[RMDB]
RNA sequence: GGGAACGACUCGAGUAGAGUCGAAAAAUCAGAGGGCGCUAUCAUGCAAACUAGGAUUGUCUGCUCAUGCACAGAACCAACUACCGAUAACUAACAGUGCAUGGAGGUUAGUUAUUCCAUAUUAAUUAAAACUCGUAAUUCUUCGGAAUUACGAGAACUAUUAUACGACGUUCGCGUCGUAUAAUAGAAAAGAAACAACAACAACAAC
Reactivity to DMS in 0.01 (KOAc 150mM, MgCl2 10mM, bicine 150mM(pH8.5), 24C), signal-to-noise 2, nucleotides 027 to 156: a070u010c060a090g010a100g000g000g020c130g000c050u000a050u020c100a110u040g000c050a080a190a150c050u000a100g000g000a100u000u000g030u000c020u010g020c000u000c050a050u000g050c000a080c010a100g010a090a070c040c030a080a120c100u010a230c040c060g040a050u000a030a040c020u000a040a080c010a100g010u010g000c010a020u000g010g010a300g010g000u000u000a020g000u000u000a040u000u000c050c030a090u000a110u000u000a060a120u000u000a070a080a070a120c010u000c000g030u000a000a010u000u000c000u000u000c300g040g010a040a000u000u000a000c000g020a000g020a020a060
Reactivity to 2A3 in 0.01 (KOAc 150mM, MgCl2 10mM, bicine 150mM(pH8.5), 24C), signal-to-noise 7, nucleotides 027 to 156: a000u030c030a010g020a040g060g030g010c020g000c020u100a130u300c080a070u260g010c020a030a050a030c030u030a020g060g000a030u040u050g030u030c020u050g010c010u020c010a020u020g000c010a010c000a030g040a110a070c070c020a050a060c050u150a100c060c070g020a020u010a010a010c000u000a000a000c030a090g020u030g130c010a010u010g000g060a130g240g000u010u000a000g000u010u010a020u090u060c020c000a050u110a070u250u200a120a090u100u140a050a090a060a060c000u000c000g000u000a000a000u000u000c010u030u040c150g070g000a000a000u000u000a000c000g000a000g000a000a000
This 207-nucleotide RNA was probed chemically with DMS and 2A3. The reactions ran in a buffer of 150 mM KOAc, 10 mM MgCl2 and 150 mM bicine (pH 8.5), at 24 C. Values cover nucleotides 27 to 156. As a SHAPE reagent, 2A3 marks flexible, mostly unpaired nucleotides at the ribose 2'-OH. The 2A3 profile rests on 6,341 reads. Source: RMDB library M2RFOK, as collected in RNAgym. For DMS, 4,518 sequencing reads were counted.